The data come from the RNA Mapping Database (RMDB), library OK2TST. An RNA of 177 nucleotides, treated with 2A3 and DMS and read out base by base.

RNA sequence: GGGAACGACUCGAGUAGAGUCGAAAAAGCUAAAUGAAAACGCUGUGAGUCUCAUCCUCAUGCCACAGGCAUCAUGAAAUUACUUUAUACGUGAAUGAUUUGUCUUGUUCGUGAAUAUAGUGUGGCCUGAUCCAAUAGGUUUCGACCUAUUGGAUCAAAAAGAAACAACAACAACAAC
Reactivity to 2A3 in 0.01 (KOAc 150mM, MgCl2 10mM, bicine 150mM(pH8.5), 24C), signal-to-noise 4, nucleotides 027 to 126: a000g080c050u090a130a090a080u230g090a090a050a030a020c060g000c040u030g040u070g130a020g030u000c020u020c050a040u030c010c000u040c030a020u090g000c000c000a020c010a030g040g040c020a050u040c010a000u040g060a030a070a050u070u020a030c040u090u170u080a120u040a070c090g080u080g130a090a080u070g040a080u050u080u110g050u040c020u050u090g120u060u040c030g010u030g070a060a010u150a020u050a110g110u040g000u020g040g020c000c000
Reactivity to DMS in 0.01 (KOAc 150mM, MgCl2 10mM, bicine 150mM(pH8.5), 24C), signal-to-noise 5, nucleotides 027 to 126: a060g010c050u010a050a090a130u010g010a110a100a110a120c130g010c030u010g010u010g000a080g000u000c040u000c170a100u000c050c020u000c070a120u000g010c030c020a030c040a060g000g000c130a060u000c030a020u000g010a060a020a030u000u000a040c050u000u000u000a050u000a100c140g010u000g010a080a100u010g000a070u000u000u010g000u010c060u000u000g010u000u000c030g010u000g010a080a060u000a080u010a090g020u000g020u000g000g010c030c300

2A3 adducts were read by reverse transcription with SuperScript II with manganese.